This 207-nucleotide RNA was probed chemically with 2A3 and DMS. The RNA was probed in 150 mM KOAc, 10 mM MgCl2 and 150 mM bicine (pH 8.5) at 24 C. For 2A3 the reverse transcriptase was SuperScript II with manganese.
[RMDB]
RNA sequence: GGGAACGACUCGAGUAGAGUCGAAAAGGGCUUGACGCAUCGCCCGAAUAUGAUGCAUGUGCUUUUGCACUAAGAUAAAUGUCCGUAUCGUAGGGGACAUAGAACCUACUCAUUAAUGUCCGAAGAGUCUGGGACGAUCAUCAGGCAAGACUAAGAAACUAUAUACGGAUUUCGAUCCGUAUAUAGUAAAAGAAACAACAACAACAAC
Reactivity to 2A3 in 0.01 (KOAc 150mM, MgCl2 10mM, bicine 150mM(pH8.5), 24C), signal-to-noise 6, nucleotides 027 to 156: g030g000g000c040u060u080g060a040c050g000c020a000u010c020g000c010c010c000g000a020a010u120a060u120g050a020u040g030c040a050u090g020u010g010c020u100u120u230u280g010c030a000c040u060a060a060g040a100u110a110a150a040u140g030u010c010c020g020u070a060u130c020g010u020a030g020g040g000g010a010c020a020u100a040g070a020a010c020c010u010a030c020u020c040a020u020u220a150a070u130g030u000c020c030g030a110a050g020a050g060u000c010u060g020g000g030a030c020g030a070u060c040a010u020c010a020g040g000c020a050a020g020a040c040u100a100a010g050a090a170
Reactivity to DMS in 0.01 (KOAc 150mM, MgCl2 10mM, bicine 150mM(pH8.5), 24C), signal-to-noise 3, nucleotides 027 to 156: g020g020g010c020u000u000g020a050c040g020c050a040u000c020g010c000c040c000g010a100a070u000a040u010g010a020u000g010c030a130u000g010u000g000c030u000u010u010u000g040c020a020c030u000a080a100g010a140u010a050a100a140u010g010u000c030c070g000u000a040u000c080g030u010a130g050g020g020g010a100c040a050u000a100g000a130a130c060c020u000a020c020u000c040a110u000u000a030a100u010g010u000c020c010g010a110a120g010a150g010u000c010u000g020g020g010a040c020g010a020u000c030a080u000c000a050g000g020c030a080a110g000a140c060u000a110a180g010a180a160